The record gives the reactivity of an RNA of 177 nucleotides to DMS. Conditions: 150 mM KOAc, 10 mM MgCl2 and 150 mM bicine (pH 8.5), 24 C. Values are in units of 0.01, from 0 to 300, in steps of 10. Values cover nucleotides 27 to 126.
RNA sequence: GGGAACGACUCGAGUAGAGUCGAAAAGUUGAAGACUUGGAUGUCUCUGGACCUUGGACCUAGUGACAUGUAGGUGGUUCUCGACCAUUUGUUUAGUAAGAUGUGCAAUCCCAAGCCAGAAUUACUAUAUGUACAACCGGUUCGCCGGUUGUACAUAAAAAGAAACAACAACAACAAC
Reactivity to DMS in 0.01 (KOAc 150mM, MgCl2 10mM, bicine 150mM(pH8.5), 24C), signal-to-noise 1, nucleotides 027 to 126: g010u010u010g020a090a050g010a100c060u010u000g000g000a100u010g000u000c000u010c000u000g040g020a100c030c100u010u010g040g010a110c050c000u000a060g000u000g010a040c040a030u000g010u000a010g020g010u010g020g010u000u000c060u000c080g010a110c070c080a080u010u010u000g010u000u000u000a070g000u010a020a010g000a240u010g010u000g000c020a050a130u000c000c020c000a170a120g000c010c010a030g010a100a110u000u000a000c000u020a120